Chemical mapping of a 177-nucleotide RNA with 2A3 and DMS. DMS adducts were read by reverse transcription with MarathonRT.
RNA sequence: GGGAACGACUCGAGUAGAGUCGAAAAGGAGGACCGGGACCCGCAGCGCGACGGCCUGCCGGGCCCCUGCGCGGUGGCACAGCCUGGGCCCGCUCAAGCGGGGCCGCAGGGCCAAGGGGUGCUUGCGCUCCGGAGAAUUAUUCGUAAUUCUCCGGAGAAAAGAAACAACAACAACAAC
Reactivity to 2A3 in 0.01 (KOAc 150mM, MgCl2 10mM, bicine 150mM(pH8.5), 24C), signal-to-noise 2, nucleotides 027 to 126: g040g040a030g020g040a040c020c000g010g080g020a090c020c030c020g000c010a030g010c020g010c020g070a110c060g080g000c000c000u020g040c050c040g040g010g000c000c000c010c000u050g020c060g020c060g030g080u070g050g020c060a010c020a110g090c000c030u040g030g060g000c010c020c000g010c050u130c080a190a010g020c000g050g010g010g000c030c020g000c020a050g000g050g000c010c010a020a020g060g020g030g010u020g030c000u090u120g020c040g000
Reactivity to DMS in 0.01 (KOAc 150mM, MgCl2 10mM, bicine 150mM(pH8.5), 24C), signal-to-noise 4, nucleotides 027 to 126: g000g010a090g000g000a100c070c060g000g010g000a090c040c030c030g020c040a060g010c150g020c030g020a110c300g000g000c020c010u000g010c120c080g010g000g010c020c010c020c030u000g000c060g010c070g020g010u010g000g020c030a060c070a150g000c040c070u000g000g000g000c000c000c020g010c020u010c200a120a130g010c040g010g010g000g010c030c030g000c050a060g000g010g020c030c060a090a090g010g000g010g010u000g000c050u000u010g010c090g000
Record summary:
It was measured as part of the RMDB library OK2TRN. For 2A3 the reverse transcriptase was SuperScript II with manganese. For DMS, 5,596 sequencing reads were counted. The reactions ran in a buffer of 150 mM KOAc, 10 mM MgCl2 and 150 mM bicine (pH 8.5), at 24 C.